[RMDB]
RNA sequence: GGGAACGACUCGAGUAGAGUCGAAAAUUGUACUGAUGACCGUUGUGUGUUACAUUGUGCUAAUUUCAAUGUAUUGUUUGCUAUGACCAUGCCUAAGACUUGUUUCGGACCCAUAGUCCGAAAGAUCGCUAUGAUAUACGUUCGCGUAUAUCAUAGCAAAAGAAACAACAACAACAAC
Reactivity to DMS in 0.01 (KOAc 150mM, MgCl2 10mM, bicine 150mM(pH8.5), 24C), signal-to-noise 4, nucleotides 027 to 126: u000u000g010u000a060c070u000g010a070u000g010a090c030c030g010u000u000g010u000g010u000g010u000u000a040c030a040u000u000g020u000g010c150u010a100a090u010u010u000c050a030a050u000g010u000a050u000u000g000u000u000u000g020c050u000a060u000g000a070c060c030a050u000g010c020c030u000a070a090g010a100c130u000u000g000u000u000u000c000g000g000a020c000c090c200a100u020a170g000u000c000c000g010a010a010a050g010a040u010c160
Reactivity to 2A3 in 0.01 (KOAc 150mM, MgCl2 10mM, bicine 150mM(pH8.5), 24C), signal-to-noise 3, nucleotides 027 to 126: u040u030g050u020a030c020u040g050a040u060g060a030c000c050g080u120u110g040u010g000u000g030u040u050a060c010a050u080u020g010u010g010c030u070a090a140u070u090u060c050a050a020u040g050u070a070u130u110g080u080u070u040g020c010u040a030u100g030a030c020c030a040u040g030c030c010u040a070a040g060a100c050u070u070g050u080u050u000c000g010g000a000c000c000c040a060u110a040g010u000c000c000g030a000a000a000g060a030u120c050